RNA sequence: GGGAACGACUCGAGUAGAGUCGAAAAGCAAAAAAGCUAAGCCAGCGGGCAGAGGAAAACGCCUAUAGCCGGCGAGUGAAGACGAACCAUCGGCUGCCGUGUUCUUUUUCCUCUUGGAGGUUGGAGUGAUGAACAGAAUCUUCGGAUUCUGUUCAUCAAAAGAAACAACAACAACAAC
Reactivity to DMS in 0.01 (KOAc 150mM, MgCl2 10mM, bicine 150mM(pH8.5), 24C), signal-to-noise 2, nucleotides 027 to 126: g070c070a010a070a060a060a050a080g000c010u000a060a130g000c000c010a040g000c020g000g000g020c100a040g000a000g000g000a010a010a050a060c070g000c180c000u000a080u040a090g010c020c130g000g010c110g000a130g000u000g030a080a070g020a050c130g000a070a100c150c050a130u060c110g010g000c010u000g030c160c270g000u000g000u010u000c060u010u000u010u000u000c000c010u000c050u000u010g000g000a130g000g020u000u000g030g000a110g000u060
Reactivity to 2A3 in 0.01 (KOAc 150mM, MgCl2 10mM, bicine 150mM(pH8.5), 24C), signal-to-noise 3, nucleotides 027 to 126: g000c010a040a080a050a060a040a000g050c080u120a060a010g010c000c010a010g010c060g030g070g000c030a010g020a020g090g000a000a070a020a000c040g040c040c010u110a100u150a110g020c010c030g000g010c040g050a080g030u060g070a070a020g160a070c090g060a050a020c040c030a050u070c020g080g000c020u000g020c000c020g040u070g020u070u060c010u040u070u000u020u020c010c010u050c000u070u080g110g000a070g000g040u000u000g000g020a080g040u040

An RNA of 177 nucleotides, treated with DMS and 2A3 and read out base by base. For 2A3 the reverse transcriptase was SuperScript II with manganese. The RNA was probed in 150 mM KOAc, 10 mM MgCl2 and 150 mM bicine (pH 8.5) at 24 C.